[RMDB]
RNA sequence: GGGAACGACUCGAGUAGAGUCGAAAACUUUACUUUCUUCCAUUGAAUGGCUGCAUUGCUUUAAGCAUUCUUCUUAUGAUGAGUAGCUAGACGCUGAAGAACUGGACUGGCCUUCAUAGUUGGCCCGGGCAUCUCGGACAUUCGUGUCCGAGAUGCCAAAAGAAACAACAACAACAAC
Reactivity to 2A3 in 0.01 (KOAc 150mM, MgCl2 10mM, bicine 150mM(pH8.5), 24C), signal-to-noise 1, nucleotides 027 to 126: c000u060u130u130a000c000u080u060u060c000u000u000c000c000a040u000u110g000a050a000u130g030g000c060u010g000c010a080u180u100g010c040u030u200u070a150a000g030c030a030u030u000c010u000u050c070u050u090a200u250g080a090u020g030a010g020u030a000g000c000u000a060g000a050c060g000c120u070g000a020a010g030a080a090c110u110g000g030a000c050u040g030g020c000c070u030u010c040a040u060a120g070u010u050g010g000c000c000c000g060